Chemical mapping of a 177-nucleotide RNA with 2A3 and DMS. DMS (dimethyl sulfate) methylates the pairing face of unpaired adenines and cytosines. The RNA was probed in 150 mM KOAc, 10 mM MgCl2 and 150 mM bicine (pH 8.5) at 24 C. Source: RMDB libraries RFM100 and RFMREP, as collected in RNAgym.

RNA sequence: GGGAACGACUCGAGUAGAGUCGAAAACGAAGGGGCACUGCCCUUAUAGUGCAAAGCAUGGUUGUAAUUCCGGCAACCCGGAGACGUUCUGGACGCGGGUUCGAUUCCCGCCACCUCCACAGUGGGCAUAUCGGGUCAUAUUCGUAUGACCCGAUAUAAAAGAAACAACAACAACAAC
Reactivity to 2A3 in 0.01 (KOAc 150mM, MgCl2 10mM, bicine 150mM(pH8.5), 24C), signal-to-noise 4, nucleotides 027 to 126: c040g080a140a050g020g000g000g040c020a040c210u130g010c010c000c000u010u020a090u050a000g030u030g030c030a020a030a030g040c070a070u140g030g020u000u000g060u130a100a090u100u050c020c010g010g010c020a050a010c000c000c000g010g000a020g010a020c030g020u040u030c060u030g060g030a020c060g010c010g030g030g000u030u070c010g030a040u100u080c000c000c000g010c010c000a030c010c010u090c030c020a090c020a060g100u110g030g020g000c030
Reactivity to DMS in 0.01 (KOAc 150mM, MgCl2 10mM, bicine 150mM(pH8.5), 24C), signal-to-noise 5, nucleotides 027 to 126: c040g010a160a170g000g000g000g020c010a080c170u040g020c000c010c030u010u010a010u010a060g010u020g020c070a120a110a060g000c100a100u000g010g010u000u010g010u020a080a120u010u000c040c030g000g000c030a060a090c060c000c080g010g000a060g010a110c020g000u000u000c000u010g000g010a090c170g000c030g000g010g000u010u000c130g000a300u020u000c000c000c000g020c010c100a070c050c010u030c030c070a100c120a100g010u000g000g000g000c090